The record gives the reactivity of an RNA of 177 nucleotides to DMS. Reactivities are rounded to 0.1 and cut off at 0 and 3.

[RMDB]
RNA sequence: GGGAACGACUCGAGUAGAGUCGAAAAGAUAUGGAGAGCAUGGAGAGGAGAUAAGUACAGCGAUUCACCAUCGGAAACGAUGGUGGGCUGUACUUAUCUCUACCCACCUCCCUGCUCUCCUAAGUCACGCAAUAAAAAUGUUCGCAUUUUUAUUGCGAAAAGAAACAACAACAACAAC
Reactivity to DMS in 0.01 (KOAc 150mM, MgCl2 10mM, bicine 150mM(pH8.5), 24C), signal-to-noise 4, nucleotides 027 to 126: g010a080u000a300u010g000g010a000g010a020g020c010a010u010g020g020a030g010a150g050g000a020g000a020u000a000a000g010u000a010c000a000g010c000g000a190u000u060c020a010c000c000a010u000c000g010g010a200a130a230c000g010a010u000g000g040u000g000g010g000c000u000g010u000a000c000u000u000a000u000c000u000c010u010a020c070c060c090a300c140c000u000c000c000c020u000g010c000u000c000u000c010c000u000a000a040g000u000c050a300
DMS adducts were read by reverse transcription with MarathonRT.